RNA sequence: GGGAACGACUCGAGUAGAGUCGAAAAGUGGGCCUAAUUCAGACAGUUCUCAAGAAAUCAGAUUUAAGCUGGGCGCAGUGGCUCAAGUCUGUAAUCCCAGCACUUUGGGAGGCCAAGGCAGGCAGAUCACCUGACGUCAGGAGUUCGAGACCAACUAACCAUGUAAUCCAUUCGUGGAUUACAUGGUAAAAGAAACAACAACAACAAC
Reactivity to DMS in 0.01 (KOAc 150mM, MgCl2 10mM, bicine 150mM(pH8.5), 24C), signal-to-noise 1, nucleotides 027 to 156: g030u000g020g010g040c040c000u000a040a240u010u000c020a070g030a070c020a120g000u000u000c030u000c040a130a160g020a050a060a110u000c020a060g080a140u040u000u040a040a010g000c010u010g000g000g060c140g030c020a120g020u020g010g030c020u000c010a040a070g040u000c000u000g020u020a050a120u010c030c000c000a120g040c040a040c080u010u000u000g020g010g000a060g020g020c000c020a070a070g000g020c030a060g100g000c060a060g000a080u010c040a040c010c000u000g010a040c000g000u010c030a090g000g010a070g000u000u000c040g000a110g000a100c000c020a000a060c050u000a150
Reactivity to 2A3 in 0.01 (KOAc 150mM, MgCl2 10mM, bicine 150mM(pH8.5), 24C), signal-to-noise 2, nucleotides 027 to 156: g120u130g000g000g030c000c000u070a090a100u070u070c020a030g020a040c020a030g020u090u010c040u020c010a030a060g080a070a110a030u090c040a070g070a120u100u200u130a080a040g020c000u020g020g000g010c040g000c030a000g020u060g030g030c040u000c160a030a040g070u000c010u030g040u060a010a030u030c010c000c010a000g030c030a070c060u120u100u050g050g000g010a030g020g000c040c010a000a000g000g000c010a000g050g000c020a010g040a030u090c010a020c020c010u040g050a050c040g060u060c030a020g030g040a040g020u050u020c040g080a080g010a150c000c000a040a040c030u000a010